[RMDB]
RNA sequence: GGGAACGACUCGAGUAGAGUCGAAAAGAUAUGGAGAAGGUCAACAGCACCAGGCAUCGGAAACGAUGCUGGUGACAUGACCUGAUUCCUAAGUCAAAAUCAGUGUAUUGUUCGCAAUACACUGAAAGUAUCUAUGAUUGUUCGCAAUCAUAGAUACAAAAGAAACAACAACAACAAC
Reactivity to 2A3 in 0.01 (KOAc 150mM, MgCl2 10mM, bicine 150mM(pH8.5), 24C), signal-to-noise 9, nucleotides 027 to 126: g020a010u050a030u100g010g010a020g010a030a030g010g000u010c020a060a070c060a300g250c000a020c000c010a040g300g090c000a000u000c000g000g000a030a020a020c000g000a000u000g000c010u000g000g010u000g030a170c030a050u020g000a000c000c000u000g000a020u050u000c000c000u020a090a010g040u020c030a020a020a010a300u030c000a000g000u000g000u010a010u000u010g070u040u100c260g000c120a010a000u000a000c000a000c000u000g000a000a000a000
Reactivity to DMS in 0.01 (KOAc 150mM, MgCl2 10mM, bicine 150mM(pH8.5), 24C), signal-to-noise 9, nucleotides 027 to 126: g010a030u000a290u000g000g000a020g000a240a010g010g010u000c000a030a140c290a180g010c010a010c000c000a030g010g020c000a010u000c000g000g000a070a060a120c000g020a010u000g000c000u000g000g010u000g010a060c100a160u000g000a010c000c000u000g000a160u010u000c000c010u000a050a140g000u000c030a080a080a110a130u000c000a010g010u000g000u000a000u000u000g000u000u010c200g020c000a010a010u000a000c000a000c000u000g000a000a030a090

The data come from the RNA Mapping Database (RMDB), library TTRDEL. Chemical mapping of a 177-nucleotide RNA with 2A3 and DMS. Values are in units of 0.01, from 0 to 300, in steps of 10. 2A3 adducts were read by reverse transcription with SuperScript II with manganese. For DMS the reverse transcriptase was MarathonRT.